[RMDB]
RNA sequence: GGGAACGACUCGAGUAGAGUCGAAAAGCUUGAUUAGCCAAGAUUCCAUAACUCACUACCCAGCUCUUAAGAUGGUUCAAACACAUCUUAGCCACUAUGUUCUUAACAUAGAUUGGUUGUGGUUUGCGACGUCGCACGUUCGCGUGCGACAAAAGAAACAACAACAACAAC
Reactivity to DMS in 0.01 (KOAc 150mM, MgCl2 10mM, bicine 150mM(pH8.5), 24C), signal-to-noise 3, nucleotides 027 to 129: g000c000u010u040g030a070u020u040a030g020c000c000a000a020g000a150u040u010c050c000a080u010a170a030c150u030c060a040c000u050a000c030c020c110a110g000c050u010c120u060u030a020a060g000a050u000g040g010u030u030c180a090a130a070c230a060c010a070u000c050u000u020a060g030c000c000a060c000u020a040u080g000u000u040c230u050u080a070a060c010a030u030a020g040a120u000u000g000g000u050u030g020u010g010g000u000u040u010g030c090g050a140c180
Reactivity to 2A3 in 0.01 (KOAc 150mM, MgCl2 10mM, bicine 150mM(pH8.5), 24C), signal-to-noise 3, nucleotides 027 to 129: g040c020u000u020g030a110u030u100a000g030c000c000a000a000g010a080u110u000c000c000a070u050a050a070c040u020c080a050c020u090a060c060c000c050a030g020c060u050c050u070u100a030a000g010a020u030g040g010u130u060c050a040a070a010c070a010c000a070u000c000u030u020a000g010c000c010a070c000u000a000u000g000u160u080c130u190u290a040a000c000a010u000a020g050a080u050u070g020g000u000u010g000u000g000g000u000u030u120g030c010g040a010c010
Chemical mapping of a 170-nucleotide RNA with DMS and 2A3. 2A3 adducts were read by reverse transcription with SuperScript II with manganese. Source: RMDB library 15KLIB, as collected in RNAgym. For DMS, 6,875 sequencing reads were counted.